[RMDB]
RNA sequence: GGGAACGACUCGAGUAGAGUCGAAAAUGAUGUGGAGGCUGGGCACUGCUUUGGGCGCGAGACUUGCGGAGCUGUCUUCCCCGGACCCUGAUGACCGCGCGUGCUUCUAGAAAGGGGGCGUGGAGGGCCAAGAAGUUCAAUUCGUUGAACUUCUUGGAAAAGAAACAACAACAACAAC
Reactivity to 2A3 in 0.01 (KOAc 150mM, MgCl2 10mM, bicine 150mM(pH8.5), 24C), signal-to-noise 4, nucleotides 027 to 126: u100g050a000u090g040u070g090g040a030g020g020c060u050g040g020g040c030a040c070u100g050c030u130u080u090g040g020g010c040g000c020g050a050g030a060c040u060u060g010c040g060g010a040g010c040u030g040u070c020u060u040c010c000c020c010g070g040a080c020c000c020u050g060a100u130g050a050c020c010g030c010g000c030g100u050g070c000u070u010c030u050a090g100a140a110a020g040g000g000g000g000c010g000u020g000g050a070g010g010g000
Reactivity to DMS in 0.01 (KOAc 150mM, MgCl2 10mM, bicine 150mM(pH8.5), 24C), signal-to-noise 5, nucleotides 027 to 126: u010g000a100u010g020u000g020g010a090g020g000c050u000g010g000g010c060a070c080u000g010c060u010u000u010g020g010g020c060g020c080g000a090g000a060c070u000u000g010c080g010g000a110g010c070u000g010u000c080u000u000c030c000c000c070g010g000a140c030c040c030u000g010a120u000g000a170c040c020g010c050g000c040g010u010g000c020u000u000c050u010a110g010a060a080a080g000g000g010g000g000c050g020u000g000g000a140g000g000g000